[RMDB]
RNA sequence: GGGAACGACUCGAGUAGAGUCGAAAACUAAAAUAAUUAUUCUUUCUAUCUGAUCGGACGCUUCUUGCAUGGCUAAAUAUAUUAGUCUAUUUAGUUUCAUGAUCAGUGAUAGCGAGCAUCCAAUGACGAUUACUCAUACAUUCGUGUAUGAGUAAUCAAAAGAAACAACAACAACAAC
Reactivity to 2A3 in 0.01 (KOAc 150mM, MgCl2 10mM, bicine 150mM(pH8.5), 24C), signal-to-noise 9, nucleotides 027 to 126: c030u090a030a050a030a170u280a080a110u220u180a120u190u060c020u040u060u010c020u040a110u000c020u040g040a030u040c030g020g020a020c030g000c010u040u050c020u080u120g030c040a040u100g010g000c010u010a010a030a010u140a030u060a100u120u150a040g040u020c010u000a020u000u020u000a010g000u000u020u110c040a060u100g020a050u050c010a040g030u030g090a010u030a010g020c020g010a010g020c030a050u040c030c040a100a120u120g050a050c070
Reactivity to DMS in 0.01 (KOAc 150mM, MgCl2 10mM, bicine 150mM(pH8.5), 24C), signal-to-noise 5, nucleotides 027 to 126: c040u000a040a060a070a120u030a120a120u030u020a070u020u010c030u000u010u010c020u010a070u000c020u000g000a040u000c030g010g010a040c110g000c010u000u000c070u010u010g030c080a060u010g010g000c010u000a000a010a080u020a060u020a160u000u020a080g010u010c040u020a040u000u010u000a000g010u000u020u030c010a030u000g020a070u020c010a040g010u030g000a020u010a010g000c070g000a020g010c190a060u000c090c060a060a100u010g010a140c210